RNA sequence: GGGAACGACUCGAGUAGAGUCGAAAAAUCAGAGUCACAGCCUUAAUGUCCAGUUCAACUUUAGAUUUGGUGUCGGUUUUAACACGCAGUUCUUGUGAAUAAUCCUGUAAAUGUGAGUGUACAUGUAACUUCCUGACAUUUUCGAAUGUCAGGAAGUAAAAGAAACAACAACAACAAC
Reactivity to 2A3 in 0.01 (KOAc 150mM, MgCl2 10mM, bicine 150mM(pH8.5), 24C), signal-to-noise 1, nucleotides 027 to 126: a000u090c040a030g000a000g210u040c010a000c010a000g040c020c000u100u100a160a030u130g100u140c000c000a000g010u040u010c040a060a060c040u100u200u130a080g060a180u040u000u160g090g010u010g030u060c040g020g130u000u050u030u140a000a100c010a010c010g010c040a000g010u080u020c050u010u080g030u000g020a000a010u090a160a060u060c000c000u000g120u130a130a090a000u050g020u000g020a130g000u130g010u090a030c040a090u110g040u070a020
Reactivity to DMS in 0.01 (KOAc 150mM, MgCl2 10mM, bicine 150mM(pH8.5), 24C), signal-to-noise 3, nucleotides 027 to 126: a090u020c070a070g000a070g030u010c040a050c080a080g010c070c030u010u010a060a060u010g000u000c030c040a090g010u000u000c050a090a060c090u000u010u000a070g010a100u010u010u010g020g010u010g020u000c050g010g010u000u010u000u000a060a090c090a070c050g020c040a050g010u000u000c040u000u000g010u010g020a060a080u000a080a090u010c030c010u000g020u010a030a050a070u010g010u000g000a090g010u010g010u000a050c120a050u000g000u010a080